[RMDB]
RNA sequence: GGGAACGACUCGAGUAGAGUCGAAAAUCGUUCACGAUCUCGAGAACGUGUGAACUCGUACUCACGAACACACUCGUGAACGAGAGUGUACUCACGUGUUCGAGUUCUCUCUCGAGUUCACGAGAACACACGUACACGAUCGUGAGUGUGUACGUGAAUACCCACGUAGAUUCGUCUACGUGGGUAUAAAAGAAACAACAACAACAAC
Reactivity to DMS in 0.01 (KOAc 150mM, MgCl2 10mM, bicine 150mM(pH8.5), 24C), signal-to-noise 3, nucleotides 027 to 156: u000c030g030u000u000c010a070c050g010a090u010c030u010c020g020a120g000a050a110c080g020u000g020u000g000a050a160c060u000c020g000u010a120c100u000c030a020c010g000a070a130c050a120c100a070c040u000c010g050u000g020a090a150c030g020a060g000a120g010u010g020u000a080c060u000c030a160c120g050u000g050u010u000c040g000a170g000u000u010c000u000c020u000c050u010c080g020a110g000u000u010c040a060c050g000a180g010a090a130c020a090c010a040c020g000u000a020c020a050c020g000a100u010c050g000u000g000a020g010u000g010u000g040u000a020c020g030u000g000a120
Reactivity to 2A3 in 0.01 (KOAc 150mM, MgCl2 10mM, bicine 150mM(pH8.5), 24C), signal-to-noise 7, nucleotides 027 to 156: u110c020g010u010u010c010a000c020g040a090u040c030u060c110g170a160g010a170a080c080g050u060g030u050g060a030a030c030u010c060g030u090a060c040u040c060a000c030g030a080a020c060a010c010a010c070u000c010g050u070g160a100a030c020g000a000g000a000g010u030g000u030a030c020u050c060a060c130g120u080g070u120u090c030g010a000g020u080u030c020u000c000u000c010u020c050g040a070g030u070u050c040a010c010g030a020g020a020a000c020a000c000a000c030g010u010a010c010a010c050g030a040u030c020g000u030g020a010g020u050g000u000g010u010a030c050g020u030g040a030
Chemical mapping of a 207-nucleotide RNA with DMS and 2A3. For DMS, 4,986 sequencing reads were counted. DMS adducts were read by reverse transcription with MarathonRT. For 2A3, 6,095 sequencing reads were counted. The reactions ran in a buffer of 150 mM KOAc, 10 mM MgCl2 and 150 mM bicine (pH 8.5), at 24 C. Values cover nucleotides 27 to 156. For 2A3 the reverse transcriptase was SuperScript II with manganese. The data come from the RNA Mapping Database (RMDB), library OK3TST.